[RMDB]
RNA sequence: GGGAACGACUCGAGUAGAGUCGAAAAGCGAAGUUAAGUACUUUUUAAAAGGCAAGUUACAAAACACAAUGCAAAGUAUUCUUAUUAAAACAUAGCUCGGGGCCGGGCGCGGUGGCUCACGCCUGUAAAUUAGAGGUACAUUCGUGUACCUCUAAUUAAAAGAAACAACAACAACAAC
Reactivity to 2A3 in 0.01 (KOAc 150mM, MgCl2 10mM, bicine 150mM(pH8.5), 24C), signal-to-noise 2, nucleotides 027 to 126: g040c000g080a050a010g010u050u020a050a030g000u110a060c000u010u080u040u090u230a070a180a020a040g080g040c020a030a000g000u100u140a100c050a050a200a030a010c040a030c030a060a120u110g020c030a080a010a000g010u020a080u090u020c030u100u090a150u120u210a130a170a040a020c010a000u130a030g030c020u030c040g030g000g050g060c040c030g060g020g060c070g010c010g030g080u060g030g030c000u010c010a000c050g010c010c010u080g070u090a040
Reactivity to DMS in 0.01 (KOAc 150mM, MgCl2 10mM, bicine 150mM(pH8.5), 24C), signal-to-noise 3, nucleotides 027 to 126: g020c060g010a090a140g020u000u000a050a120g020u010a030c010u000u000u010u000u010a040a090a140a100g010g030c030a050a120g020u030u010a120c190a090a050a080a060c090a060c080a070a080u000g010c030a060a030a090g000u000a020u010u000c060u010u000a120u010u010a070a090a060a060c020a060u010a230g000c030u010c040g000g020g000g000c110c040g000g000g020c020g010c060g000g030u000g010g010c060u000c050a030c060g010c030c020u010g000u000a060